[RMDB]
RNA sequence: GGGAACGACUCGAGUAGAGUCGAAAAGGAUCACUGGCGUCCAGCGGAGAAACAGGAGCUCUUCGGUCGCCGCGGAUCACUGGCGUCCAGCGGAGAAACAGGAGCUCGUCUCCUUCCUUUCGCUGCUGACUUAUAUAUACUUCGGUAUAUAUAAGUCAAAAGAAACAACAACAACAAC
Reactivity to DMS in 0.01 (KOAc 150mM, MgCl2 10mM, bicine 150mM(pH8.5), 24C), signal-to-noise 4, nucleotides 027 to 126: g010g000a050u000c090a130c120u010g010g000c060g000u000c020c020a100g020c150g000g000a020g000a040a070a140c210a160g010g000a060g000c020u000c000u000u000c130g010g020u000c020g000c000c000g030c060g000g000a010u000c040a160c130u010g020g020c120g000u000c000c000a100g050c010g000g000a020g010a030a050a080c140a030g000g010a020g020c020u000c120g020u000c010u000c010c010u000u000c010c010u000u010u010c070g010c020u000g010c220u010
Reactivity to 2A3 in 0.01 (KOAc 150mM, MgCl2 10mM, bicine 150mM(pH8.5), 24C), signal-to-noise 5, nucleotides 027 to 126: g020g010a040u100c040a070c260u120g080g000c030g040u010c010c010a020g030c040g040g020a020g020a030a200a040c120a140g240g000a030g030c010u000c000u060u080c070g060g050u020c010g010c020c000g010c010g010g000a010u040c040a060c300u130g110g050c070g020u000c000c020a080g000c010g020g010a030g010a040a080a040c080a050g020g000a000g000c000u020c040g020u030c010u010c010c000u010u040c010c000u060u110u140c060g010c030u080g010c030u030
The record gives the reactivity of an RNA of 177 nucleotides to DMS and 2A3. 2A3 adducts were read by reverse transcription with SuperScript II with manganese. DMS adducts were read by reverse transcription with MarathonRT. For DMS, 4,324 sequencing reads were counted.